[RMDB]
RNA sequence: GGGAACGACUCGAGUAGAGUCGAAAAGACUCUCAUUCGAACCUUUGCACACCAUGCAAAUUUAACCCCUCGAAAAAUCUUGCAUGAUUUACCGGAAGCAGCGCAUGCGAGGAAGCAAAUUCCAUUGCGACCAGGCGUGAUUCUUGUCAAAAAAGGAGAUGAUACGCAUAUUCGUAUGCGUAUCAUCAAAAGAAACAACAACAACAAC
Reactivity to DMS in 0.01 (KOAc 150mM, MgCl2 10mM, bicine 150mM(pH8.5), 24C), signal-to-noise 1, nucleotides 027 to 156: g000a090c020u010c020u000c080a110u010u000c020g010a060a160c010c020u000u000u000g010c050a080c070a150c090c010a120u000g000c020a010a030a080u020u000u000a050a200c070c040c020c070u000c050g010a030a130a040a060a070u000c060u010u000g000c050a020u000g000a150u000u000u000a070c030c090g030g000a130a070g020c040a150g010c030g050c010a070u000g010c030g020a120g050g000a090a160g010c050a050a090a180u000u000c030c080a140u010u000g000c020g000a150c040c020a100g010g010c050g000u040g000a140u000u000c020u010u000g000u000c000a030a050a060a060a170a130g030g000a300
Reactivity to 2A3 in 0.01 (KOAc 150mM, MgCl2 10mM, bicine 150mM(pH8.5), 24C), signal-to-noise 4, nucleotides 027 to 156: g000a000c000u000c000u020c070a010u030u010c020g010a070a060c000c030u030u080u120g070c070a080c030a070c100c010a040u000g020c010a040a050a090u100u110u120a210a210c050c040c020c040u120c090g030a150a090a050a030a040u060c080u070u040g010c010a060u040g040a130u100u050u190a040c030c020g050g000a090a010g010c140a020g000c050g010c030a020u110g080c060g030a090g040g010a030a010g020c020a020a030a070u140u050c010c040a030u040u090g000c020g010a040c030c020a040g010g070c000g030u010g010a020u040u000c010u040u100g080u090c060a010a000a010a150a000a050g180g040a120
Structure probing data (DMS and 2A3) for a 207-nucleotide construct.
The 2A3 profile rests on 2,016 reads.
The reactions ran in a buffer of 150 mM KOAc, 10 mM MgCl2 and 150 mM bicine (pH 8.5), at 24 C.
For 2A3 the reverse transcriptase was SuperScript II with manganese.